[RMDB]
RNA sequence: GGGAACGACUCGAGUAGAGUCGAAAAGAUAUGGACAUUUCUCCGGCACAAUGAUGUGGAUAAAUGAACUAAUCGGAAACGAUUAGUUCAUUUAUCCAUUGAGUGCCAGGAGAGAAUGUCCUAAGUCCACUGUUGUACUGUUCGCAGUACAACAGUGAAAAGAAACAACAACAACAAC
Reactivity to DMS in 0.01 (KOAc 150mM, MgCl2 10mM, bicine 150mM(pH8.5), 24C), signal-to-noise 2, nucleotides 027 to 126: g000a110u010a300u010g000g010a020c000a030u000u030u000c000u000c000c000g010g000c000a010c000a220a190u010g020a080u000g010u000g010g000a030u000a000a000a000u000g000a020a030c000u000a000a010u010c000g000g000a110a080a210c010g000a020u000u000a000g000u000u000c010a000u000u000u000a000u000c000c010a010u000u000g010a110g010u000g000c000c000a040g020g000a030g000a010g010a040a020u000g020u000c000c010u000a010a090g000u010c040
About this RNA
The record gives the reactivity of an RNA of 177 nucleotides to DMS. The RNA was probed in 150 mM KOAc, 10 mM MgCl2 and 150 mM bicine (pH 8.5) at 24 C. For DMS, 3,374 sequencing reads were counted. The data come from the RNA Mapping Database (RMDB), library TTRINS. Values cover nucleotides 27 to 126.